[RMDB]
RNA sequence: GGGAACGACUCGAGUAGAGUCGAAAAGAUAUGGAUUCGCGAAGAACUGGGCUACGACGAUCUCGGAAACGAGGGAGUAGCGCCAGGGAGCGAAUCCUAAGUCAAAACGUACCGUUCGCGGUACGAACAUAAUAGAGCCGUUCGCGGCUCUAUUAUGAAAAGAAACAACAACAACAAC
Reactivity to 2A3 in 0.01 (KOAc 150mM, MgCl2 10mM, bicine 150mM(pH8.5), 24C), signal-to-noise 2, nucleotides 027 to 126: g010a000u060a030u210g010g000a010u020u000c020g000c030g170a300a120g030a120a060c000u000g000g000g010c010u010a000c010g300a090c000g000a080u000c000u000c010g020g000a090a080a050c010g010a000g000g000g000a010g010u010a000g020c100g130c000c010a000g020g000g010a020g000c000g000a000a000u000c010c000u000a040a000g050u010c030a000a000a120a120c010g010u010a000c020c000g000u050u070c300g000c010g080g000u000a010c010g000a020a000
Reactivity to DMS in 0.01 (KOAc 150mM, MgCl2 10mM, bicine 150mM(pH8.5), 24C), signal-to-noise 3, nucleotides 027 to 126: g000a040u010a300u000g000g010a010u000u000c000g010c010g020a120a180g000a090a220c010u000g010g000g000c010u010a010c000g020a070c250g010a050u000c000u000c000g000g020a070a080a190c000g020a020g000g000g000a020g030u000a000g000c010g010c020c000a000g000g000g000a130g010c000g000a010a000u000c000c000u010a000a070g010u010c030a080a050a060a200c030g010u000a000c000c000g020u000u010c190g010c020g000g000u000a000c000g010a050a190